[RMDB]
RNA sequence: GGGAACGACUCGAGUAGAGUCGAAAACAAGGGCAGCCAGCUCGGUCUGCCGGAGGUGACGCUGGGUCUGCUGCCGGGUGGCGGUGGGGUGACCCGCACGGUACGGAUGUUCGGCAUCCAGAACGCGAUUUGAAUAGGAGUUCGCUCCUAUUCAAAUAAAAGAAACAACAACAACAAC
Reactivity to DMS in 0.01 (KOAc 150mM, MgCl2 10mM, bicine 150mM(pH8.5), 24C), signal-to-noise 8, nucleotides 027 to 126: c070a080a300g000g010g010c010a030g000c030c030a180g020c110u020c110g010g010u010c030u010g020c020c010g000g010a170g010g010u000g010a080c100g000c060u010g020g010g010u000c020u000g010c080u000g010c020c010g000g020g010u000g020g000c040g010g030u000g010g000g010g000u010g000a090c030c020c010g010c010a040c050g000g020u000a130c130g010g000a040u000g010u000u010c150g010g000c020a030u000c010c020a070g010a080a120c080g000c110g000
Reactivity to 2A3 in 0.01 (KOAc 150mM, MgCl2 10mM, bicine 150mM(pH8.5), 24C), signal-to-noise 5, nucleotides 027 to 126: c020a030a030g050g010g000c000a010g010c010c030a080g090c160u130c170g020g040u050c030u040g020c010c000g030g020a060g030g050u100g040a030c060g010c100u180g030g010g020u020c020u050g040c020u030g010c020c020g070g050g150u170g100g080c060g020g010u080g010g030g020g040u060g030a030c010c000c000g000c010a020c020g020g060u110a030c040g010g020a030u030g060u120u200c090g160g000c010a020u020c010c010a030g050a080a030c050g020c050g090
Structure probing data (DMS and 2A3) for a 177-nucleotide construct. The RNA was probed in 150 mM KOAc, 10 mM MgCl2 and 150 mM bicine (pH 8.5) at 24 C. 2A3 adducts were read by reverse transcription with SuperScript II with manganese. DMS adducts were read by reverse transcription with MarathonRT. The 2A3 profile rests on 8,891 reads.